[RMDB]
RNA sequence: GGGAACGACUCGAGUAGAGUCGAAAAUGGGCUGAGGCUUUUGACGUGGCCUUAAGGCUGCUCUCCCUCUUCUCUGGCCUGUGCAUACGUGCUCUUCCAAGAGGAUUGGUGGGAACUGGCUUGUGUCACAUCUUGUCAGACAGGAGUGUGCAGAGACGAACUCGUAUAGGUUCGCCUAUACGAGUUCAAAAGAAACAACAACAACAAC
Reactivity to 2A3 in 0.01 (KOAc 150mM, MgCl2 10mM, bicine 150mM(pH8.5), 24C), signal-to-noise 4, nucleotides 027 to 156: u120g020g020g010c030u020g020a010g030g030c010u040u040u110u240g100a060c110g030u070g000g000c040c000u040u040a060a060g040g010c030u040g030c020u000c000u010c010c010c000u010c010u050u010c020u010c010u010g040g020c050c060u040g010u040g010c020a030u040a080c150g070u030g030c010u000c020u070u010c010c000a090a060g010a050g120g050a110u040u090g040g030u100g010g000g040a040a030c030u050g040g010c000u030u050g030u040g070u150c030a020c000a110u040c040u050u060g030u020c010a000g010a080c010a010g010g040a050g030u070g020u050g050c040a010g020a010g020a060c150
Reactivity to DMS in 0.01 (KOAc 150mM, MgCl2 10mM, bicine 150mM(pH8.5), 24C), signal-to-noise 2, nucleotides 027 to 156: u000g010g010g040c030u000g030a080g020g010c070u000u000u000u020g010a060c130g070u000g000g020c010c020u000u000a070a110g030g040c020u000g000c030u130c020u000c030c000c030u000c060u000u000c030u000c020u000g010g030c120c080u000g000u000g040c040a080u010a080c110g000u000g000c020u010c040u000u000c050c060a120a130g010a120g010g000a100u010u010g010g030u000g020g020g020a060a080c050u010g010g000c020u000u000g020u000g000u010c040a030c040a060u000c030u000u010g020u000c040a090g010a160c050a080g040g010a060g030u010g010u000g000c030a130g000a120g000a150c080

Structure probing data (2A3 and DMS) for a 207-nucleotide construct.
The data come from the RNA Mapping Database (RMDB), library OK3TST.
The DMS profile rests on 5,237 reads.
Conditions: 150 mM KOAc, 10 mM MgCl2 and 150 mM bicine (pH 8.5), 24 C.
For 2A3 the reverse transcriptase was SuperScript II with manganese.
Values cover nucleotides 27 to 156.
For 2A3, 3,645 sequencing reads were counted.